[RMDB]
RNA sequence: GGGAACGACUCGAGUAGAGUCGAAAAUAACCAGUAUGUGGAUGUGGCCACACUCUCUGUUGUGCCCCAGCUCACUGGUGGCUCUGUCUACAAAUAUGCUUCCUUUCAGGUGGAGAACGACCAGGAGAUGUAAGAAAUGGUUCGCCAUUUCUUACAUAAAAGAAACAACAACAACAAC
Reactivity to 2A3 in 0.01 (KOAc 150mM, MgCl2 10mM, bicine 150mM(pH8.5), 24C), signal-to-noise 6, nucleotides 027 to 126: u080a010a030c010c000a010g080u100a100u150g040u050g030g020a060u060g060u130g200g050c030c000a020c010a030c020u060c000u000c030u080g080u120u050g020u140g040c010c000c000c000a010g020c010u040c020a180c110u020g000g000u020g030g000c010u000c010u040g040u000c020u040a060c050a040a130a040u230a090u180g060c030u070u060c020c010u050u110u130c060a030g020g020u030g020g040a040g010a140a090c090g040a020c030c020a010g010g020a060g010
Reactivity to DMS in 0.01 (KOAc 150mM, MgCl2 10mM, bicine 150mM(pH8.5), 24C), signal-to-noise 9, nucleotides 027 to 126: u010a110a150c040c120a080g000u010a070u000g020u000g010g010a100u010g020u000g010g010c020c020a040c030a060c110u010c090u000c110u010g010u000u000g020u000g000c060c010c020c050a120g010c040u000c040a100c030u000g010g010u000g000g010c010u000c030u000g000u000c020u000a080c140a050a080a090u010a080u010g010c080u000u000c030c040u000u010u000c110a050g000g020u000g000g000a060g010a060a090c050g010a060c020c020a050g000g010a060g010